This 177-nucleotide RNA was probed chemically with DMS and 2A3.

RNA sequence: GGGAACGACUCGAGUAGAGUCGAAAACUAGAUGCGUUCGCGCAUCUAGAAAGGUACAAAAACAUGCAAAAAGUACCAAACGACAAAAGUCCAAGCAUGAAAAAACUGAGUACUUCGGUACUCAGAAGUCACUAAAUACGUUCGCGUAUUUAGUGACAAAAGAAACAACAACAACAAC
Reactivity to DMS in 0.01 (KOAc 150mM, MgCl2 10mM, bicine 150mM(pH8.5), 24C), signal-to-noise 2, nucleotides 027 to 126: c000u000a000g000a010u000g010c000g010u000u000c210g060c000g000c000a000u000c010u000a000g000a050a050a110g010g000u000a010c020a030a130a080a080a060c010a000u000g000c020a060a050a150a100a100g000u000a020c000c000a050a050a120c180g010a150c180a030a020a080a070g010u010c010c000a090a120g010c010a000u010g000a010a060a070a120a160a110c060u000g020a000g010u000a010c010u000u000c220g020g000u000a000c000u000c000a000g000a020a040
Reactivity to 2A3 in 0.01 (KOAc 150mM, MgCl2 10mM, bicine 150mM(pH8.5), 24C), signal-to-noise 2, nucleotides 027 to 126: c000u000a010g000a000u000g000c000g000u030u060c180g020c010g010c090a000u010c000u010a000g000a010a010a000g000g000u000a000c020a000a160a010a100a020c000a040u030g000c010a000a010a050a090a080g000u010a000c010c000a080a120a020c170g160a030c040a020a120a010a000g030u000c010c010a010a050g000c000a020u000g020a140a020a010a010a020a040c000u000g000a000g010u010a000c000u030u110c260g070g000u000a000c000u010c000a000g010a010a020

The reactions ran in a buffer of 150 mM KOAc, 10 mM MgCl2 and 150 mM bicine (pH 8.5), at 24 C.